[RMDB]
RNA sequence: GGGAACGACUCGAGUAGAGUCGAAAACUAGAAUGUAUUUCUGGAAUGGUGCUGAGUGGGAAGAACCUGAGGUUGUGAACGACCCAGAACGAUGGCGUGAAGACCUCGAAAAACAAAUCUCUGAGGCAAUUUGAUCCUUAUUCGUAAGGAUCAAAUUAAAAGAAACAACAACAACAAC
Reactivity to 2A3 in 0.01 (KOAc 150mM, MgCl2 10mM, bicine 150mM(pH8.5), 24C), signal-to-noise 2, nucleotides 027 to 126: c030u030a020g050a050a100u120g080u220a180u050u080u000c030u030g030g080a080a100u090g130g000u020g070c040u020g010a060g020u090g010g000g050a040a060g010a050a030c000c050u060g000a020g050g000u030u010g060u050g160a070a000c020g130a100c050c000c000a020g020a050a010c040g110a100u080g000g000c030g000u040g020a020a010g030a030c000c000u000c010g010a070a060a000a000a030c010a000a100a040u010c020u010c030u070g040a040g040g040c000
Reactivity to DMS in 0.01 (KOAc 150mM, MgCl2 10mM, bicine 150mM(pH8.5), 24C), signal-to-noise 6, nucleotides 027 to 126: c030u000a050g020a070a070u000g010u000a100u000u000u000c010u000g010g000a120a100u000g020g010u000g010c020u000g000a110g010u000g010g000g010a070a080g010a070a120c100c060u000g000a040g010g020u000u000g010u010g010a160a050c050g000a110c080c010c060a090g010a100a120c260g000a100u000g000g010c020g010u010g010a120a260g000a060c000c010u000c010g000a020a050a070a060a070c150a070a080a100u000c080u000c030u000g000a100g020g020c100
Overview: The data come from the RNA Mapping Database (RMDB), library OK2TST. Chemical mapping of a 177-nucleotide RNA with 2A3 and DMS. Values cover nucleotides 27 to 126. 2A3 adducts were read by reverse transcription with SuperScript II with manganese. The reactions ran in a buffer of 150 mM KOAc, 10 mM MgCl2 and 150 mM bicine (pH 8.5), at 24 C. For 2A3, 1,910 sequencing reads were counted. DMS adducts were read by reverse transcription with MarathonRT.